[RMDB]
RNA sequence: GGGAACGACUCGAGUAGAGUCGAAAACGAGUGCAAGUGCACAAGGGAGCUUGACUGUGAGACUGACAGGUCGAGCAGGGACGAAAGUCGGGACUAGUGAUCCGGCACCGGCAAGUGGAAGCGGUGUGUUACUGAUUCCAUUCGUGGAAUCAGUAACAAAAGAAACAACAACAACAAC
Reactivity to 2A3 in 0.01 (KOAc 150mM, MgCl2 10mM, bicine 150mM(pH8.5), 24C), signal-to-noise 8, nucleotides 027 to 126: c030g020a030g010u040g010c030a170a140g070u080g160c010a010c020a080a060g030g010g010a060g010c010u050u060g040a050c010u010g010u040g040a040g030a060c020u070g020a080c050a100g130g010u020c010g000a000g000c010a010g010g040g000a030c050g080a110a030a000g010u030c000g010g000g020a040c040u060a060g050u030g100a050u020c010c000g010g000c010a010c010c010g090g010c060a090a050g060u080g100g040a060a010g020c010g020g010u070g010u010
Reactivity to DMS in 0.01 (KOAc 150mM, MgCl2 10mM, bicine 150mM(pH8.5), 24C), signal-to-noise 5, nucleotides 027 to 126: c110g010a210g010u010g000c010a160a120g010u030g030c020a040c070a110a100g030g000g020a120g010c020u000u000g010a090c010u020g020u010g000a240g010a040c080u020g000a080c300a070g000g000u000c010g000a140g010c010a060g020g010g010a080c030g000a050a070a060g000u000c000g010g000g010a110c070u020a060g000u000g000a090u020c020c030g000g010c050a020c050c040g010g010c070a090a120g020u010g000g010a090a100g000c040g010g000u010g000u010